Source information:
Chemical mapping of a 177-nucleotide RNA with DMS and 2A3. Conditions: 150 mM KOAc, 10 mM MgCl2 and 150 mM bicine (pH 8.5), 24 C. The DMS profile rests on 12,559 reads. Source: RMDB library OK2TST, as collected in RNAgym. Reactivities are given for positions 27 through 126.
RNA sequence: GGGAACGACUCGAGUAGAGUCGAAAAGGCCGCUUGUUUGAUUCAGACAAAAGCUAUAUGCUGAAAUUCUCGAAUUUUCCUAGAUACAGCAAAAGAAUCAGUCUUUGUUAGUUAGGGGCCACUAACAAUGUAGUAUCUAGUUCGCUAGAUACUACAUAAAAGAAACAACAACAACAAC
Reactivity to DMS in 0.01 (KOAc 150mM, MgCl2 10mM, bicine 150mM(pH8.5), 24C), signal-to-noise 9, nucleotides 027 to 126: g020g030c010c020g020c110u000u000g010u010u000u000g010a070u000u000c020a080g010a090c160a090a090a190a070g000c010u000a060u010a080u010g020c010u000g000a040a090a100u000u010c040u000c180g010a050a040u000u000u000u010c070c030u000a050g010a070u000a070c080a040g000c060a050a070a100a080g000a070a070u010c100a110g000u000c050u000u000u000g000u000u000a020g000u000u010a080g010g010g010g010c020c030a080c020u010a010a020c030a140
Reactivity to 2A3 in 0.01 (KOAc 150mM, MgCl2 10mM, bicine 150mM(pH8.5), 24C), signal-to-noise 5, nucleotides 027 to 126: g000g010c030c030g090c280u190u200g150u120u160u070g070a110u090u070c020a000g060a100c020a030a190a010a010g000c010u070a030u020a030u300g010c000u020g030a070a120a140u110u020c030u030c070g050a080a100u040u060u070u090c010c000u040a040g010a070u090a060c030a030g040c010a020a040a060a060g090a030a040u100c040a030g120u020c040u050u090u060g010u020u020a040g000u010u040a090g070g050g020g000c010c000a000c010u020a010a010c000a010